[RMDB]
RNA sequence: GGGAACGACUCGAGUAGAGUCGAAAAAAGCAUGUCUCUCUAUUGUCUCUCUAUACAGAACUUAGUAUGGUGAUGGAUCGAUAGAGAGACAUUCCUGCAUCUGUCAUCCAUCACCAUAAAAACAAAACAAACUAUCAUGAUUCGUCAUGAUAGUUUGAAAAGAAACAACAACAACAAC
Reactivity to 2A3 in 0.01 (KOAc 150mM, MgCl2 10mM, bicine 150mM(pH8.5), 24C), signal-to-noise 6, nucleotides 027 to 126: a000a000g120c090a060u070g010u020c000u010c010u000c010u030a020u050u050g100u020c030u000c010u010c030u150a070u030a250c080a090g150a200a030c050u110u090a090g060u060a140u020g000g000u000g000a000u000g000g000a010u070c050g000a000u000a000g000a000g010a000g000a000c000a000u000u000c010c000u000g010c000a100u030c070u180g210u130c020a010u000c000c000a000u010c000a000c000c000a000u020a000a030a010a000a000c050a000a070a000a010
Reactivity to DMS in 0.01 (KOAc 150mM, MgCl2 10mM, bicine 150mM(pH8.5), 24C), signal-to-noise 5, nucleotides 027 to 126: a080a060g010c240a060u000g000u000c000u000c010u000c020u000a040u000u000g010u010c070u000c060u000c060u000a070u000a100c180a070g010a090a110c210u000u020a090g020u000a020u000g000g010u000g010a020u000g000g000a020u010c110g010a010u000a010g010a010g000a010g010a020c020a020u000u000c010c010u000g010c160a100u000c100u010g020u000c110a060u000c000c000a010u000c010a010c010c010a010u000a000a040a050a060a040c180a040a060a050a120